An RNA of 177 nucleotides, treated with 2A3 and DMS and read out base by base. The reactions ran in a buffer of 150 mM KOAc, 10 mM MgCl2 and 150 mM bicine (pH 8.5), at 24 C. Reactivities are rounded to 0.1 and cut off at 0 and 3.
[RMDB]
RNA sequence: GGGAACGACUCGAGUAGAGUCGAAAAAAUCUGAUAAUGGCACCGCGUUCACUAGUAAAGCCAUGCAAGAAUGGGCCAAUACGUAUGGCAUAGAAUGGAAGGUGGGGGCUAUAUACCAUCCUCAAUCAUCGCACAUACAGUUCGCUGUAUGUGCGAUAAAAGAAACAACAACAACAAC
Reactivity to 2A3 in 0.01 (KOAc 150mM, MgCl2 10mM, bicine 150mM(pH8.5), 24C), signal-to-noise 1, nucleotides 027 to 126: a000a000u120c100u040g010a110u000a260a010u030g030g010c060a010c050c030g010c040g160u020u030c040a100c110u040a010g100u120a160a020a000g000c000c000a000u000g000c000a060a060g120a180a150u080g050g070g090c080c120a030a030u110a130c080g030u050a000u030g000g000c020a050u020a010g300a240a040u030g070g000a000a000g070g010u020g040g040g090g100g000c000u000a000u000a010u010a200c040c030a000u160c010c010u030c010a010a040u090c000
Reactivity to DMS in 0.01 (KOAc 150mM, MgCl2 10mM, bicine 150mM(pH8.5), 24C), signal-to-noise 1, nucleotides 027 to 126: a050a020u020c110u000g030a050u010a050a050u010g000g030c010a080c040c040g000c020g030u000u020c020a130c050u010a070g030u000a060a100a080g000c000c000a020u000g000c040a080a110g010a080a110u000g010g030g010c040c050a070a080u020a080c260g030u000a000u020g020g000c020a040u020a080g030a130a070u000g000g010a040a020g000g050u000g020g000g010g030g010c070u000a020u000a140u000a030c020c030a060u010c010c050u000c180a050a060u030c180